Source: RMDB library RFMREP, as collected in RNAgym. Structure probing data (2A3 and DMS) for a 177-nucleotide construct. The reactions ran in a buffer of 150 mM KOAc, 10 mM MgCl2 and 150 mM bicine (pH 8.5), at 24 C.
[RMDB]
RNA sequence: GGGAACGACUCGAGUAGAGUCGAAAAAUUCCCUAUGAUGGUAAUAACCAUGCUAAUACUGAUGUCUUGUGACUGAAUCAAAGUUAUGUGUCUGAGGGAAUUAAACGUUCCUUGUUCGCAAGGAACGGUCAUUGAGGUGGUUCGCCACCUCAAUGACAAAAGAAACAACAACAACAAC
Reactivity to 2A3 in 0.01 (KOAc 150mM, MgCl2 10mM, bicine 150mM(pH8.5), 24C), signal-to-noise 3, nucleotides 027 to 126: a000u020u000c000c000c000u010a050u050g050a010u010g040g030u070a130a050u100a250a050c000c000a010u080g050c070u110a140a090u070a220c010u020g030a040u050g050u020c010u100u130g040u110g050a030c030u020g130a070a060u120c060a170a020a000g000u070u010a030u060g160u020g020u000c020u050g060a010g010g030g020a010a050u100u110a190a060a000c000g000u010u020c000c000u030u000g010u010u070c210g030c080a010a010g000g000a010a000c010g020
Reactivity to DMS in 0.01 (KOAc 150mM, MgCl2 10mM, bicine 150mM(pH8.5), 24C), signal-to-noise 2, nucleotides 027 to 126: a180u000u000c000c000c000u000a080u030g000a060u000g010g010u010a300a080u010a160a070c010c020a050u000g020c100u000a090a060u010a140c110u000g000a140u000g000u000c020u000u000g070u010g000a010c030u000g000a110a080u000c110a070a100a060g010u000u000a030u000g000u020g000u010c000u010g010a230g010g000g000a030a010u010u000a020a050a290c000g030u000u000c000c000u000u000g030u010u020c180g050c000a000a000g000g000a000a000c000g010

The DMS profile rests on 1,670 reads.